[RMDB]
Chemical mapping of a 177-nucleotide RNA with DMS and 2A3. Values cover nucleotides 27 to 126. 2A3 adducts were read by reverse transcription with SuperScript II with manganese. For DMS the reverse transcriptase was MarathonRT.
RNA sequence: GGGAACGACUCGAGUAGAGUCGAAAAUUUGCUGGUUCGAGCACUUGCCUGUAUCAAAACAUCAAGAGGUGGGUGUUAGAACAAACCCAUUUUAUUGAUACGCUACAAGUAACACGUAAUAUACUGCCAUGGGCUAUCGAUUCGUCGAUAGCCCAUGAAAAGAAACAACAACAACAAC
Reactivity to DMS in 0.01 (KOAc 150mM, MgCl2 10mM, bicine 150mM(pH8.5), 24C), signal-to-noise 1, nucleotides 027 to 126: u000u000u000g040c250u000g000g000u010u000c010g000a250g000c000a000c000u000u000g020c020c100u060g000u050a110u040c240a080a020a070a250c230a120u100c300a160a020g020a080g000g000u010g000g000g030u000g000u000u020a040g000a000a140c120a130a110a080c000c000c000a010u120u000u010u000a140u030u000g000a000u000a060c080g010c050u020a100c220a000a050g070u000a000a010c130a140c060g000u000a030a050u020a090u040a030c030u040g020c120
Reactivity to 2A3 in 0.01 (KOAc 150mM, MgCl2 10mM, bicine 150mM(pH8.5), 24C), signal-to-noise 2, nucleotides 027 to 126: u160u200u130g100c110u190g000g000u010u030c000g010a020g000c000a000c000u000u020g040c000c000u100g010u030a150u160c150a000a020a060a120c060a080u210c120a140a090g080a020g160g000u050g000g000g010u000g020u020u000a010g020a000a000c050a000a000a030c000c000c020a020u010u160u090u070a230u050u080g040a010u030a040c120g000c060u010a000c050a210a070g110u080a160a000c000a000c080g030u020a100a000u110a030u040a300c090u000g060c020